Chemical mapping of a 177-nucleotide RNA with 2A3 and DMS.
For DMS, 2,228 sequencing reads were counted.
For 2A3 the reverse transcriptase was SuperScript II with manganese.
RNA sequence: GGGAACGACUCGAGUAGAGUCGAAAAGAUAUGGAGAAAGAAUGGCUUUUGACGAACUUGAUUCGGAAACGAAUCAAUGUUCGAUAAGCCACUUUCUCCUAAGUCAAAAGCGUAGUUCGCUACGCAAGAUCAUUUUACCGUUCGCGGUAAAAUGAUCAAAAGAAACAACAACAACAAC
Reactivity to 2A3 in 0.01 (KOAc 150mM, MgCl2 10mM, bicine 150mM(pH8.5), 24C), signal-to-noise 3, nucleotides 027 to 126: g020a000u070a010u080g010g000a020g040a000a000a030g140a230a300u130g000g000c070u120u220u300u300g300a300c040g000a000a000c010u010u000g000a000u000u020c000g020g000a000a060a050c020g020a010a000u000c000a010a000u180g000u000u010c000g020a020u030a000a000g010c000c000a010c000u000u000u000c000u000c000c000u000a010a000g010u020c010a050a020a060a090g000c010g000u010a000g030u080u130c300g000c130u000a010c010g020c010a000a030
Reactivity to DMS in 0.01 (KOAc 150mM, MgCl2 10mM, bicine 150mM(pH8.5), 24C), signal-to-noise 2, nucleotides 027 to 126: g000a050u000a300u020g010g000a010g020a010a020a000g010a130a160u010g010g000c000u000u000u000u000g010a300c120g000a010a020c000u000u000g010a000u000u000c000g000g000a100a060a210c000g020a000a010u010c000a000a000u000g010u000u000c000g010a090u000a020a050g030c000c010a020c000u000u000u000c000u000c000c010u000a000a040g000u010c020a060a080a120a140g000c000g010u000a010g010u010u010c290g010c000u000a000c000g040c000a110a070